Background: Conditions: 150 mM KOAc, 10 mM MgCl2 and 150 mM bicine (pH 8.5), 24 C. Chemical mapping of a 177-nucleotide RNA with DMS and 2A3. For 2A3 the reverse transcriptase was SuperScript II with manganese. Values cover nucleotides 27 to 126. Source: RMDB library OK2TRN, as collected in RNAgym. For DMS the reverse transcriptase was MarathonRT.
RNA sequence: GGGAACGACUCGAGUAGAGUCGAAAAGACGCGGUCGCCCACUGCGCCGCGCUGGCCGUCAGGAGCGAUGAUCUGGGCCACCCUCCCGUGCAGAACGGCCAGAACGGGCACUCCCAUGCGCAGUACAAUGGGUGUGCAUAUUCGUAUGCACACCCAUAAAAGAAACAACAACAACAAC
Reactivity to DMS in 0.01 (KOAc 150mM, MgCl2 10mM, bicine 150mM(pH8.5), 24C), signal-to-noise 3, nucleotides 027 to 126: g010a140c060g000c020g010g010u010c130g000c030c050c120a150c050u000g000c020g000c020c010g020c300g000c030u000g020g000c020c010g010u000c070a090g000g010a060g020c110g020a070u030g000a120u000c020u000g010g000g000c070c010a060c030c030c020u000c010c020c040g000u000g010c100a150g000a130a060c010g020g000c020c010a010g040a070a050c050g000g000g000c070a070c100u020c010c010c000a060u010g000c050g050c030a060g000u020a090c250a100
Reactivity to 2A3 in 0.01 (KOAc 150mM, MgCl2 10mM, bicine 150mM(pH8.5), 24C), signal-to-noise 1, nucleotides 027 to 126: g050a000c050g020c030g100g060u120c030g000c030c000c000a060c040u020g030c030g020c040c010g030c000g000c010u020g000g000c070c000g030u000c000a110g000g080a060g000c120g020a120u100g050a080u140c040u130g050g060g060c020c000a040c010c000c000u000c010c000c040g030u020g070c070a060g100a200a010c000g000g040c000c000a040g030a020a010c020g000g050g000c030a020c060u100c010c000c030a020u050g000c060g020c060a030g040u080a070c080a060